[RMDB]
RNA sequence: GGGAACGACUCGAGUAGAGUCGAAAAUAUAGGCGUAUAUGCGCCAUCUUUACGAGUUAUAAUAAUCGAAAUGGUGUGAUUGUCGCGAUUAUUUGGGCAUUCUAUGUCAAAUUUGACAUACUCAUUAGUUGACGUAUAAGGCGGCAAUACCGGCUUAAGUGUGAUCGAAUUUCGAUUCGAUCACACUAAAAGAAACAACAACAACAAC
Reactivity to 2A3 in 0.01 (KOAc 150mM, MgCl2 10mM, bicine 150mM(pH8.5), 24C), signal-to-noise 1, nucleotides 027 to 156: u180a000u120a150g070g000c050g000u040a080u050a010u300g090c000g000c030c000a050u050c030u000u050u100a080c000g060a010g090u080u060a090u030a300a000u190a110a100u000c050g040a000a030a110u120g070g010u120g090u070g080a050u090u050g000u000c020g010c100g110a130u210u000a050u110u130u000g060g010g000c030a010u130u000c100u250a070u000g000u000c040a030a170a300u300u260u120g000a000c010a070u080a050c000u000c090a020u000u030a020g100u070u030g070a020c010g020u010a000u000a120a000g040g000c030g000g000c000a000a000u020a070c010c000g050g000c110u030u080a100